[RMDB]
Notes
An RNA of 177 nucleotides, treated with 2A3 and DMS and read out base by base. The RNA was probed in 150 mM KOAc, 10 mM MgCl2 and 150 mM bicine (pH 8.5) at 24 C. For 2A3 the reverse transcriptase was SuperScript II with manganese.
RNA sequence: GGGAACGACUCGAGUAGAGUCGAAAAUGAAUCAGAUUGGUAUGAUUAUGAGGAUUAUAUAGACUUGAAUCAAGUGCCGCUUGGUUCCUCACUUCCAUUAAAAUUAGAAGCAAUACCAUUGCUAUACGGGCCAGUAUAAUUUCGAUUAUACUGGCCCAAAAGAAACAACAACAACAAC
Reactivity to 2A3 in 0.01 (KOAc 150mM, MgCl2 10mM, bicine 150mM(pH8.5), 24C), signal-to-noise 2, nucleotides 027 to 126: u120g010a000a050u030c030a030g190a240u130u130g000g000u120a150u060g000a060u060u000a200u300g000a000g070g010a020u120u110a180u160a000u000a280g040a020c010u000u000g000a050a000u000c010a000a150g080u020g180c000c030g000c130u000u000g000g000u040u040c020c000u000c040a120c030u000u000c020c000a110u180u300a050a060a000a120u240u260a070g080a100a000g000c000a010a010u100a230c030c050a030u000u000g000c000u090a110u040a250c040
Reactivity to DMS in 0.01 (KOAc 150mM, MgCl2 10mM, bicine 150mM(pH8.5), 24C), signal-to-noise 1, nucleotides 027 to 126: u060g000a090a050u000c000a020g000a000u000u000g010g010u000a200u010g000a170u000u000a120u000g000a070g000g010a040u020u020a160u000a130u030a170g000a080c040u000u030g000a100a020u020c000a070a200g100u000g000c030c030g000c120u050u000g000g000u040u000c000c300u000c070a010c090u050u000c000c020a120u080u030a040a060a050a080u010u050a070g000a120a030g010c000a000a010u030a140c150c070a190u000u000g000c000u000a210u000a000c140